[RMDB]
RNA sequence: GGGAACGACUCGAGUAGAGUCGAAAAGAUCAUGUUGCACGGCCGCAUCUCGCACAUUCAGACCAGCUGGGUGAAACUUGGAGUGCGGCGCACCCAGGUGAUGCUCGAAGGUGGCGCCAACGACCUGACUCCCAAUUUACUUCGGUAAAUUGGGAGUAAAAGAAACAACAACAACAAC
Reactivity to DMS in 0.01 (KOAc 150mM, MgCl2 10mM, bicine 150mM(pH8.5), 24C), signal-to-noise 3, nucleotides 027 to 126: g020a090u010c050a070u010g010u010u000g020c080a100c130g010g010c010c050g040c050a050u010c030u000c100g040c110a170c070a050u000u000c040a050g000a150c110c130a080g000c050u000g000g010g010u020g010a120a070a080c110u000u020g010g000a040g040u000g000c040g000g000c120g030c040a040c020c030c010a080g000g000u000g000a060u010g000c030u000c040g000a070a070g020g020u000g010g010c000g000c080c020a050a110c030g010a130c040c010u010g010
Reactivity to 2A3 in 0.01 (KOAc 150mM, MgCl2 10mM, bicine 150mM(pH8.5), 24C), signal-to-noise 1, nucleotides 027 to 126: g020a030u150c060a070u120g040u060u090g030c080a050c180g060g020c050c050g070c000a050u080c040u020c050g050c020a020c000a060u070u040c040a010g050a100c090c070a050g110c060u080g000g050g000u070g020a210a110a040c040u050u040g080g040a080g040u000g020c040g020g000c020g010c000a010c000c000c000a000g000g000u090g020a060u090g030c010u030c050g070a100a020g070g010u050g040g000c040g000c020c010a000a020c030g010a000c010c000u010g010